Description:
The data come from the RNA Mapping Database (RMDB), library RNAMAK. Chemical mapping of a 207-nucleotide RNA with 2A3 and DMS. The DMS profile rests on 2,780 reads. For 2A3, 4,743 sequencing reads were counted.
[RMDB]
RNA sequence: GGGAACGACUCGAGUAGAGUCGAAAAGGGGUCUCCCGUUUGACGAGAGCGACAUGCUCCAGGUGGCUGAAGCCUCCACGGCCACCGGAGCAACAGCGCUCUCCGAGGGAGACGGAGGCACCCAAAACAUUUGUUAAUGUUCGCAUUAACAAAUGAACACACCGUAUAUGUUCGCAUAUACGGUGUGAAAAGAAACAACAACAACAAC
Reactivity to 2A3 in 0.01 (KOAc 150mM, MgCl2 10mM, bicine 150mM(pH8.5), 24C), signal-to-noise 3, nucleotides 027 to 156: g110g010g030g010u000c010u000c000c000c020g010u170u130u140g010a010c000g000a000g000a000g010c020g070a100c160a270u300g010c020u020c020c080a140g000g010u010g000g000c000u010g020a090a000g020c000c000u000c000c010a010c010g000g000c010c000a000c000c010g000g000a000g000c020a060a030c070a050g010c000g000c000u000c000u000c000c010g000a000g000g000g000a010g000a000c000g000g000a000g010g000c000a020c000c000c000a000a130a050a060c000a000u000u000u000g000u000u000a010a010u020g040u040u080c300g010c110a000u010u000a000a000c000a000a000a000u010g030a110a000
Reactivity to DMS in 0.01 (KOAc 150mM, MgCl2 10mM, bicine 150mM(pH8.5), 24C), signal-to-noise 1, nucleotides 027 to 156: g000g010g020g010u000c000u000c000c010c030g010u000u020u030g030a080c200g000a000g020a030g020c130g010a080c060a210u000g000c000u000c010c000a070g100g000u000g020g000c010u010g020a040a210g010c030c000u000c010c030a160c020g000g010c010c010a010c030c020g010g020a000g020c070a040a060c130a100g030c030g010c010u010c000u000c010c000g010a060g010g000g000a040g020a070c020g000g000a000g040g000c000a100c020c000c010a000a160a120a280c000a030u000u000u000g010u000u000a020a010u000g010u000u000c300g040c030a000u000u000a020a000c000a020a010a010u010g020a100a300
For 2A3 the reverse transcriptase was SuperScript II with manganese. Reactivities are given for positions 27 through 156. The reactions ran in a buffer of 150 mM KOAc, 10 mM MgCl2 and 150 mM bicine (pH 8.5), at 24 C.